[RMDB]
RNA sequence: GGGAACGACUCGAGUAGAGUCGAAAAAGAAAUAGCGAUUCUCGAAGGAGUUGAGUCCUUCGAGGAUUGCUAAGCAAAGAUGCAGAACUAUCAAUGAACGACUUUGGUCAUCUUUGUAUACAAAAAACUACCGUACAAUGUUCGCAUUGUACGGUAGAAAAGAAACAACAACAACAAC
Reactivity to 2A3 in 0.01 (KOAc 150mM, MgCl2 10mM, bicine 150mM(pH8.5), 24C), signal-to-noise 2, nucleotides 027 to 126: a000g100a000a060a000u040a000g010c010g000a000u000u010c000u010c000g000a000a000g030g020a040g010u180u180g170a050g170u070c000c000u000u000c010g000a000g000g010a000u010u000g030c000u010a000a010g000c000a000a000a000g020a010u020g000c040a010g050a160a030c080u070a070u210c050a120a150u180g090a130a050c050g030a080c120u100u080u030g000g070u160c010a000u000c000u000u030u000g020u010a050u020a030c080a020a160a010a010a030a030
Reactivity to DMS in 0.01 (KOAc 150mM, MgCl2 10mM, bicine 150mM(pH8.5), 24C), signal-to-noise 1, nucleotides 027 to 126: a000g000a120a110a140u000a000g000c000g020a000u000u000c000u000c000g010a030a000g020g000a010g000u000u010g010a270g000u000c000c000u000u000c000g000a020g000g000a000u000u000g000c000u000a010a140g010c000a020a020a000g000a000u000g020c030a300g000a060a060c140u000a170u010c030a060a150u000g020a120a130c240g000a000c150u000u000u000g000g000u020c010a020u000c000u000u000u000g010u000a030u020a110c090a010a040a040a020a050a090
Source: RMDB library M2PK90, as collected in RNAgym.
The record gives the reactivity of an RNA of 177 nucleotides to 2A3 and DMS.
For 2A3, 1,742 sequencing reads were counted.
2A3 adducts were read by reverse transcription with SuperScript II with manganese.